[RMDB]
RNA sequence: GGGAACGACUCGAGUAGAGUCGAAAAUUCACUGACUGCCUUAACUACACCUCACUCUCCAUCUGUUGAAAUCCUACCUGUUGUUCCAGUCCCCUCACAGAUUAUAGGGCCUUUCUCUGACCCUACCUGAAAUGCUACAGUUCGCUGUAGCAUUUCAAAAAGAAACAACAACAACAAC
Reactivity to DMS in 0.01 (KOAc 150mM, MgCl2 10mM, bicine 150mM(pH8.5), 24C), signal-to-noise 2, nucleotides 027 to 126: u000u010c020a080c040u000g000a100c060u000g000c020c020u000u000a070a110c100u020a100c130a070c030c020u000c050a080c070u000c030u000c050c020a050u020c050u000g000u010u000g010a060a110a050u000c050c010u020a030c070c040u010g020u000u010g020u000u010c010c030a100g020u000c030c000c010c050u000c040a090c140a070g010a090u020u000a110u010a080g020g000g000c030c010u000u000u000c040u000c110u000g030a060c020c010c010u010a050c190c120

This 177-nucleotide RNA was probed chemically with DMS.
For DMS the reverse transcriptase was MarathonRT.